[RMDB]
RNA sequence: GGGAACGACUCGAGUAGAGUCGAAAAAGUUCCAUAUUUGCAAACCCCGUUUUGAGAGUGUGGAAUUUCAGGUCCAAGGGUUUGCCAUUCUUUGGUGAGGACUAUAGAUGGAGCAACCAAUGCUCCCAAGCACAAUUAGGUUCGCCUAAUUGUGCUUAAAAGAAACAACAACAACAAC
Reactivity to 2A3 in 0.01 (KOAc 150mM, MgCl2 10mM, bicine 150mM(pH8.5), 24C), signal-to-noise 1, nucleotides 027 to 126: a000g000u000u000c000c010a010u050a050u030u100u080g000c010a010a010a000c050c030c050c080g040u010u000u120u090g140a150g020a010g000u050g010u010g000g000a000a020u040u120u040c070a110g000g020u000c060c030a060a070g020g040g000u010u030u070g010c000c000a060u100u020c060u160u120u030g000g030u000g020a050g000g050a020c000u000a030u090a140g090a070u220g030g000a010g000c000a010a090c030c080a060a130u090g010c000u010c000c010c000
Reactivity to DMS in 0.01 (KOAc 150mM, MgCl2 10mM, bicine 150mM(pH8.5), 24C), signal-to-noise 3, nucleotides 027 to 126: a070g020u000u000c010c000a030u000a040u000u000u010g010c020a010a020a060c050c150c160c180g030u010u000u000u010g000a110g010a040g020u000g040u000g010g000a020a010u000u000u000c130a150g010g010u000c020c040a130a130g040g010g000u010u010u000g010c000c080a040u010u010c100u000u000u000g010g010u000g000a130g000g000a040c030u000a120u010a110g010a110u000g000g010a050g010c020a040a090c090c110a070a120u000g020c030u000c000c000c210